An RNA of 207 nucleotides, treated with DMS and 2A3 and read out base by base. For 2A3 the reverse transcriptase was SuperScript II with manganese.

RNA sequence: GGGAACGACUCGAGUAGAGUCGAAAAUCAUCAAGAAGUAGGCUUAGGCCAAUUGCUUAGUGGUGAAAGUAGAGGGAAGGUAGCACUUCGACGCCUCUAAGUACGCUGUGGGAGUAGUGCUUAAAUCAAAAGCACAGCGACUUCGGUCGCUGUGCAACUACCACUGCAUGUUCGCAUGCAGUGGUAGAAAAGAAACAACAACAACAAC
Reactivity to DMS in 0.01 (KOAc 150mM, MgCl2 10mM, bicine 150mM(pH8.5), 24C), signal-to-noise 1, nucleotides 027 to 156: u000c020a050u010c040a000a070g000a030a070g030u000a120g030g000c000u010u000a130g030g080c010c070a060a110u000u000g000c000u000u010a040g070u010g000g040u020g020a060a070a130g000u000a060g000a030g010g000g030a060a050g020g000u000a050g000c090a120c070u000u000c000g030a090c090g020c030c010u010c010u000a070a070g020u000a050c130g040c050u010g060u010g010g020g010a120g030u000a060g010u000g000c010u000u020a070a080a130u010c080a070a020a110a190g000c000a010c000a030g000c010g000a030c000u000u000c300g000g010u020c010g080c000u000g040u000g020c010a000a030
Reactivity to 2A3 in 0.01 (KOAc 150mM, MgCl2 10mM, bicine 150mM(pH8.5), 24C), signal-to-noise 3, nucleotides 027 to 156: u060c010a010u030c020a020a020g050a060a010g090u100a050g020g000c010u080u070a050g170g000c020c030a010a110u160u070g010c000u030u010a010g020u020g060g000u030g050a100a070a020g050u080a010g050a060g040g040g020a040a020g080g020u060a030g040c040a030c090u040u030c050g050a040c040g040c010c000u000c030u050a050a040g020u030a030c050g000c070u040g000u070g100g020g020a050g010u100a010g010u050g050c010u040u120a010a120a070u170c080a070a060a060a000g000c000a000c000a000g000c010g000a000c000u010u080c190g060g000u000c010g000c020u000g010u000g000c000a000a000

Values are in units of 0.01, from 0 to 300, in steps of 10. For DMS, 1,941 sequencing reads were counted.